[RMDB]
RNA sequence: GGGAACGACUCGAGUAGAGUCGAAAAAUGGGUGGUGCCAUUAGCCGUGCCUGGUGGCGUUGGCAGCACAAAUAUGUGUUCCCCAAGCGUGCUGGCAUUGCACCAUUUUUCCAAUUGACCGUGGCCAUCUACUUCGUCUGUUCGCAGACGAAGUAGAAAAAGAAACAACAACAACAAC
Reactivity to 2A3 in 0.01 (KOAc 150mM, MgCl2 10mM, bicine 150mM(pH8.5), 24C), signal-to-noise 2, nucleotides 027 to 126: a000u020g000g000g000u030g000g000u000g020c030c000a000u080u230a020g020c010c010g040u020g000c010c010u250g220g060u260g000g000c020g010u020u240g030g040c030a000g020c000a000c000a000a110a010u300a080u170g250u040g000u050u010c000c000c000c000a020a000g020c020g060u040g000c000u030g050g000c020a010u000u120g010c110a190c140c020a030u020u000u000u050u040c050c030a080a060u110u130g020a040c050c040g060u050g010g000c000c000a050
Reactivity to DMS in 0.01 (KOAc 150mM, MgCl2 10mM, bicine 150mM(pH8.5), 24C), signal-to-noise 2, nucleotides 027 to 126: a020u000g000g010g020u000g000g020u000g010c000c020a070u000u000a070g050c010c040g000u010g010c030c010u020g020g030u000g050g010c000g020u000u020g050g010c030a070g010c000a020c000a080a090a080u020a120u030g020u000g030u000u000c000c010c000c210a080a150g020c220g030u010g010c020u010g010g020c000a000u000u000g000c010a050c000c010a010u000u010u010u000u000c020c160a080a060u000u000g010a140c050c070g000u010g000g000c040c030a090
This 177-nucleotide RNA was probed chemically with 2A3 and DMS. 2A3 adducts were read by reverse transcription with SuperScript II with manganese. The reactions ran in a buffer of 150 mM KOAc, 10 mM MgCl2 and 150 mM bicine (pH 8.5), at 24 C. DMS adducts were read by reverse transcription with MarathonRT.